Source information: Structure probing data (2A3 and DMS) for a 177-nucleotide construct.
[RMDB]
RNA sequence: GGGAACGACUCGAGUAGAGUCGAAAAAAGAGGCCCAAGCGACUGUUUACCAAAAACACAGGACUCUGCAUAAGCCGCGAGGCGACGUAUAGGGUCUGACGCCUGCCCGGUGCCGGAAGGUCACGCGCAACUACAAGAACUUCGGUUCUUGUAGUUGAAAAGAAACAACAACAACAAC
Reactivity to 2A3 in 0.01 (KOAc 150mM, MgCl2 10mM, bicine 150mM(pH8.5), 24C), signal-to-noise 1, nucleotides 027 to 126: a000a000g080a050g020g070c010c030c050a040a030g030c000g070a120c070u030g040u040u140u050a060c010c050a100a050a110a060a000c080a020c020a060g000g010a020c010u000c010u050g010c030a010u040a190a010g000c000c000g010c040g010a040g000g010c010g030a050c060g060u070a050u100a110g000g010g040u020c020u030g030a020c030g030c000c010u060g020c000c030c020g030g020u060g020c030c000g010g000a010a060g000g000u080c020a000c000g080c000g020
Reactivity to DMS in 0.01 (KOAc 150mM, MgCl2 10mM, bicine 150mM(pH8.5), 24C), signal-to-noise 2, nucleotides 027 to 126: a060a040g010a160g010g000c030c020c040a080a090g020c080g010a060c080u000g010u000u000u000a140c100c080a040a130a030a030a080c080a040c120a170g000g010a040c030u000c000u000g020c070a010u010a100a220g010c020c000g000c260g000a130g010g010c010g010a010c280g010u000a010u000a040g000g020g010u000c040u010g000a070c120g010c020c020u000g000c070c020c040g030g000u000g030c010c000g000g020a050a060g000g000u010c040a020c050g000c170g020
Source: RMDB library RFMREP, as collected in RNAgym. For 2A3, 1,009 sequencing reads were counted. Conditions: 150 mM KOAc, 10 mM MgCl2 and 150 mM bicine (pH 8.5), 24 C. Values cover nucleotides 27 to 126.